[RMDB]
RNA sequence: GGGAACGACUCGAGUAGAGUCGAAAACUGGUGUUCGCGUGGGCUUGUGGGCCGCCAGCCCAGACUAGGGUUAUGUUCGCGCCGCUAACGCCGUGGAAGCAUACGGUGUACCUACCGGCGCCGAGCCAUCACCCCUUCGUUUCGACGAAGGGGUGAUAAAAGAAACAACAACAACAAC
Reactivity to DMS in 0.01 (KOAc 150mM, MgCl2 10mM, bicine 150mM(pH8.5), 24C), signal-to-noise 2, nucleotides 027 to 126: c050u000g040g010u010g000u010u010c100g020c080g040u000g010g010g000c080u000u010g030u000g010g000g000c040c110g000c150c110a060g040c030c020c020a090g000a120c150u000a130g020g010g000u000u000a080u000g000u000u010c020g030c070g000c010c010g000c140u000a050a050c030g010c000c020g030u000g010g000a180a110g000c140a160u000a010c040g020g000u000g010u030a060c220c150u000a060c290c020g020g000c010g010c040c040g010a030g000c000c240

The record gives the reactivity of an RNA of 177 nucleotides to DMS.
The reactions ran in a buffer of 150 mM KOAc, 10 mM MgCl2 and 150 mM bicine (pH 8.5), at 24 C.
For DMS the reverse transcriptase was MarathonRT.
Source: RMDB library OK2TRN, as collected in RNAgym.